Source information:
The record gives the reactivity of an RNA of 177 nucleotides to 2A3 and DMS. Source: RMDB library OK1LIB, as collected in RNAgym.
RNA sequence: GGGAACGACUCGAGUAGAGUCGAAAAAUCAAUUGACUGAACGAAAUGGCCAAAAUGGGCAAUGAACUAUGGGCGGGGGCGAGUGGCCCAGUAGCUGUUGAAUUGUACAGGGUCAAUUGGACCGUCGGCACGAGUCAUAUUUCGAUAUGACUCGUGCAAAAGAAACAACAACAACAAC
Reactivity to 2A3 in 0.01 (KOAc 150mM, MgCl2 10mM, bicine 150mM(pH8.5), 24C), signal-to-noise 2, nucleotides 027 to 126: a000u100c020a010a000u000u000g000a000c010u050g030a120a050c030g010a150a010a210u070g030g000c000c000a000a240a000a220u120g060g000g000c050a000a050u180g000a190a000c070u020a160u120g120g030g060c000g010g010g050g070g050c040g000a140g050u100g050g000c000c000c020a030g020u090a000g040c020u040g030u050u050g110a160a110u040u030g000u140a010c000a010g060g000g020u000c000a030a040u000u000g050g000a000c060c000g090u190c040g020
Reactivity to DMS in 0.01 (KOAc 150mM, MgCl2 10mM, bicine 150mM(pH8.5), 24C), signal-to-noise 2, nucleotides 027 to 126: a090u060c000a020a000u000u010g000a010c030u000g030a140a140c060g030a090a040a060u000g000g000c000c060a100a080a130a090u000g030g010g020c020a140a060u010g000a090a070c140u000a020u040g000g000g000c000g030g020g000g000g060c060g010a150g050u000g010g020c000c000c000a040g010u000a040g070c110u000g010u000u000g000a130a120u000u020g010u000a090c140a120g000g000g030u000c000a040a030u040u000g020g000a100c050c000g040u010c140g000
For 2A3 the reverse transcriptase was SuperScript II with manganese. DMS adducts were read by reverse transcription with MarathonRT. The RNA was probed in 150 mM KOAc, 10 mM MgCl2 and 150 mM bicine (pH 8.5) at 24 C.